Source: RMDB library OK2TST, as collected in RNAgym. Structure probing data (2A3 and DMS) for a 177-nucleotide construct. In probing experiments dimethyl sulfate is read out at A N1 and C N3, which are open when not base-paired. The reactions ran in a buffer of 150 mM KOAc, 10 mM MgCl2 and 150 mM bicine (pH 8.5), at 24 C.
RNA sequence: GGGAACGACUCGAGUAGAGUCGAAAAUGACGCCGAUCCGGUUGAUCAGCGGCGUAAUGAUGCUGUCGGUGAACUUGGUGACCAACGCCGUGAACGCUGUGCCGAUUACCACCGCGACAGCCAGGUCGAAACCGCUCAAAUUCGUUUGAGCGGUUUCAAAAGAAACAACAACAACAAC
Reactivity to 2A3 in 0.01 (KOAc 150mM, MgCl2 10mM, bicine 150mM(pH8.5), 24C), signal-to-noise 1, nucleotides 027 to 126: u060g040a000c050g040c100c020g000a010u000c010c010g090g050u120u190g080a130u040c040a010g010c020g040g000c040g040u030a000a050u140g120a050u150g000c010u040g040u060c000g020g010u020g030a100a050c010u040u080g060g000u060g060a100c040c070a100a050c090g040c010c000g080u070g060a070a030c030g000c030u030g050u120g000c030c000g000a000u000u020a050c030c010a000c000c010g030c050g010a000c010a000g070c040c040a020g010g000u080c010
Reactivity to DMS in 0.01 (KOAc 150mM, MgCl2 10mM, bicine 150mM(pH8.5), 24C), signal-to-noise 2, nucleotides 027 to 126: u000g010a060c140g030c070c040g000a070u000c020c140g020g010u000u010g010a090u020c030a130g040c010g010g000c300g020u000a040a090u000g010a150u010g030c020u010g010u000c020g010g020u000g020a080a120c170u000u010g000g040u010g000a150c160c080a060a040c060g020c010c030g020u020g010a150a160c040g020c030u000g000u000g000c040c060g000a040u000u000a070c100c040a060c030c020g010c060g000a020c030a010g000c000c110a090g000g000u000c110